[RMDB]
RNA sequence: GGGAACGACUCGAGUAGAGUCGAAAAGAUAUGGAGCAUUUCCAGUGUAAGGCUUUUGACGCAAUGGCCGAUGCUAUCGGAAACGAUAGAUAUCGGCCAUUGCGAUAAGCCUAUUGCUCCUAAGUCACCCAUUGGUAUUGUUCGCAAUACCAAUGGGAAAAGAAACAACAACAACAAC
Reactivity to DMS in 0.01 (KOAc 150mM, MgCl2 10mM, bicine 150mM(pH8.5), 24C), signal-to-noise 3, nucleotides 027 to 126: g000a070u000a300u010g010g020a020g030c000a060u000u000u000c090c160a220g040u020g010u020a040a040g020g050c000u000u000u000u020g030a260c130g030c010a020a000u000g000g000c000c000g020a010u000g010c000u000a000u000c020g010g000a150a100a190c010g010a010u010a000g000a110u010a000u000c000g020g010c000c000a010u000u000g000c000g000a020u000a020a010g010c000c000u000a050u010u000g010c010u010c010c000u020a060a070g000u020c080a280
Reactivity to 2A3 in 0.01 (KOAc 150mM, MgCl2 10mM, bicine 150mM(pH8.5), 24C), signal-to-noise 1, nucleotides 027 to 126: g010a000u120a080u290g020g000a050g010c030a060u100u140u300c230c190a140g170u230g080u300a140a090g020g000c050u110u090u140u300g150a130c040g090c000a030a000u000g000g000c010c040g020a000u050g000c000u000a000u010c010g000g070a170a050a060c040g020a000u080a000g070a090u170a000u040c080g000g000c010c010a000u000u000g000c020g000a000u000a000a000g050c010c000u000a010u020u040g000c020u020c010c010u010a210a020g070u090c010a040
Chemical mapping of a 177-nucleotide RNA with DMS and 2A3. It was measured as part of the RMDB library TTRINS. The DMS profile rests on 3,334 reads. The reactions ran in a buffer of 150 mM KOAc, 10 mM MgCl2 and 150 mM bicine (pH 8.5), at 24 C.